[RMDB]
RNA sequence: GGGAACGACUCGAGUAGAGUCGAAAAAUGGAUGGUACAAUUGCAAAGGAUCCUCAUUUAGGUGAUAAUACACCAGGAAUACUCAUAGCAAAAACUAGUUCUCCCGUAAAUUUGGAUGUUGAAAGCAGCGUAUGCUGACUUUCGAGUCAGCAUACGCAAAAGAAACAACAACAACAAC
Reactivity to DMS in 0.01 (KOAc 150mM, MgCl2 10mM, bicine 150mM(pH8.5), 24C), signal-to-noise 1, nucleotides 027 to 126: a110u020g000g010a100u010g030g000u010a060c150a090a120u000u000g010c030a080a150a120g010g010a100u000c020c000u000c180a130u000u020u010a080g030g000u000g010a080u010a090a140u020a100c020a000c040c030a050g010g020a110a060u010a110c050u010c060a050u000a210g090c010a000a000a040a160a070c030u000a010g020u000u000c020u000c000c000c030g030u020a080a040a180u010u000u000g000g030a130u000g010u020u000g080a100a050a150g000c100a160
Chemical mapping of a 177-nucleotide RNA with DMS. It was measured as part of the RMDB library OK2TST. The reactions ran in a buffer of 150 mM KOAc, 10 mM MgCl2 and 150 mM bicine (pH 8.5), at 24 C.